Structure probing data (DMS and 2A3) for a 177-nucleotide construct. For 2A3, 5,423 sequencing reads were counted. Reactivities are given for positions 27 through 126. 2A3 adducts were read by reverse transcription with SuperScript II with manganese. The data come from the RNA Mapping Database (RMDB), library OK2TST. In probing experiments dimethyl sulfate is read out at A N1 and C N3, which are open when not base-paired.
[RMDB]
RNA sequence: GGGAACGACUCGAGUAGAGUCGAAAAACGUCGGCUGUUGGGUCCAGGCGGGGAGGCCCGGGCGGCCCCCACCGCAGCGCGGGCGCGGCCUGAGGCAGAGGAGCUGGGAAUCCAGAUUGGGUUUGAGGGACAACAAUAAAUUCGUUUAUUGUUGUCCAAAAGAAACAACAACAACAAC
Reactivity to DMS in 0.01 (KOAc 150mM, MgCl2 10mM, bicine 150mM(pH8.5), 24C), signal-to-noise 6, nucleotides 027 to 126: a110c120g020u000c060g010g000c020u000g010u000u000g020g010g010u000c040c040a110g010g010c030g020g000g010g010a090g010g010c020c010c040g000g010g020c060g020g010c010c030c020c020c030a100c040c030g010c070a060g010c100g030c080g000g000g010c150g020c040g000g010c010c020u000g000a090g010g000c040a050g010a120g010g010a090g000c040u000g000g000g000a060a070u000c030c020a080g010a170u010u010g010g000g010u000u010u000g000a190g010
Reactivity to 2A3 in 0.01 (KOAc 150mM, MgCl2 10mM, bicine 150mM(pH8.5), 24C), signal-to-noise 4, nucleotides 027 to 126: a000c040g060u040c030g050g000c020u060g060u270u100g120g010g010u030c030c010a040g060g000c020g010g020g030g020a030g030g020c000c000c000g030g080g000c040g030g000c000c030c000c000c020a040c000c030g060c060a070g070c080g020c040g070g030g000c230g000c030g140g010c000c010u050g020a090g030g000c010a000g010a040g070g000a030g010c020u050g020g010g050a040a030u020c020c010a040g110a300u090u180g040g030g050u040u090u150g070a090g030